Annotation:
This 177-nucleotide RNA was probed chemically with 2A3. 2A3 adducts were read by reverse transcription with SuperScript II with manganese. The RNA was probed in 150 mM KOAc, 10 mM MgCl2 and 150 mM bicine (pH 8.5) at 24 C. Source: RMDB library OK1LIB, as collected in RNAgym.
RNA sequence: GGGAACGACUCGAGUAGAGUCGAAAACAAGCCGGCGAGUUUGCUCUGGAUGCUUUGGCGGAGUUUGCCGGCGCAGAGGAUCCGGGACGGAACCGAGCCCAGACCUUCGGUGUCGGACGCCGGAGCGGGCGAGCUAUAGGUUCGCCUAUAGCUCGCCAAAAGAAACAACAACAACAAC
Reactivity to 2A3 in 0.01 (KOAc 150mM, MgCl2 10mM, bicine 150mM(pH8.5), 24C), signal-to-noise 1, nucleotides 027 to 126: c020a060a020g110c020c060g000g000c040g020a080g110u030u300u160g100c040u000c020u070g000g100a090u110g110c140u180u080u080g070g000c010g000g000a020g010u030u220u160g070c030c000g040g050c010g000c000a030g000a030g060g000a040u000c000c000g000g000g040a060c060g050g050a000a090c130c000g000a120g020c000c050c000a050g000a060c000c050u010u100c020g100g000u020g080u100c050g020g020a020c010g000c020c010g010g000a010g000c000g000